[RMDB]
RNA sequence: GGGAACGACUCGAGUAGAGUCGAAAAGCCACUUACGGACACUCCGUCUGACGGGCAGUCUCACUCGCAUGACUAGUCAAAGUCAUGACUGUGAGCGAGUCCGACUGAUGGUCAGUUCGAGUGUGGAGCAGUCCAGUCUAUUCGUAGACUGGACUGCAAAAGAAACAACAACAACAAC
Reactivity to DMS in 0.01 (KOAc 150mM, MgCl2 10mM, bicine 150mM(pH8.5), 24C), signal-to-noise 1, nucleotides 027 to 126: g010c020c010a010c010u000u000a140c010g030g000a020c010a300c160u000c000c000g000u030c000u000g000a050c020g010g000g010c020a070g050u000c000u010c010a010c020u000c180g010c000a010u000g010a000c000u000a090g010u020c300a040a030a060g000u000c020a000u000g000a030c020u010g000u020g000a020g030c040g030a200g030u010c000c020g000a120c000u000g010a040u000g000g000u000c150a190g010u000u010c020g000a210g010u010g040u000g020g000a140
Reactivity to 2A3 in 0.01 (KOAc 150mM, MgCl2 10mM, bicine 150mM(pH8.5), 24C), signal-to-noise 2, nucleotides 027 to 126: g020c000c020a010c010u060u070a070c000g040g010a000c010a010c050u020c020c000g000u020c010u000g040a030c000g010g000g030c010a040g050u080c000u000c010a020c010u070c050g040c010a000u010g000a000c010u030a050g250u230c110a230a300a010g000u000c010a030u000g020a030c020u020g000u020g020a000g000c010g010a080g040u000c000c000g020a050c040u030g010a010u030g030g000u000c040a070g000u000u000c000g030a060g010u040g010u000g020g020a080